[RMDB]
RNA sequence: GGGAACGACUCGAGUAGAGUCGAAAAGAUAUGGAACCGGGGCCAUGAAAGACUUCGAUAAGCUGUUGGGAUCGGAAACGAUCCCACCAGCUUUUGACGAAGGGGAGUGGCCCCGGUUCCUAAGUCACUUUAGCAAUCAGUUCGCUGAUUGCUAAAGAAAAGAAACAACAACAACAAC
Reactivity to DMS in 0.01 (KOAc 150mM, MgCl2 10mM, bicine 150mM(pH8.5), 24C), signal-to-noise 2, nucleotides 027 to 126: g020a040u010a300u000g000g010a020a010c010c010g000g010g000g020c000c000a000u000g000a250a210a240g020a110c040u000u010c000g020a210u000a020a030g000c000u010g010u000u000g020g020g010a010u000c010g000g010a140a070a150c020g010a010u000c000c010c000a010c020c000a000g020c010u000u000u000u000g020a210c200g000a030a000g000g000g000g030a300g000u000g000g000c000c000c000c000g010g020u000u010c000c010u000a000a060g000u000c050a170

Chemical mapping of a 177-nucleotide RNA with DMS. For DMS the reverse transcriptase was MarathonRT. The reactions ran in a buffer of 150 mM KOAc, 10 mM MgCl2 and 150 mM bicine (pH 8.5), at 24 C. The data come from the RNA Mapping Database (RMDB), library TTRINS.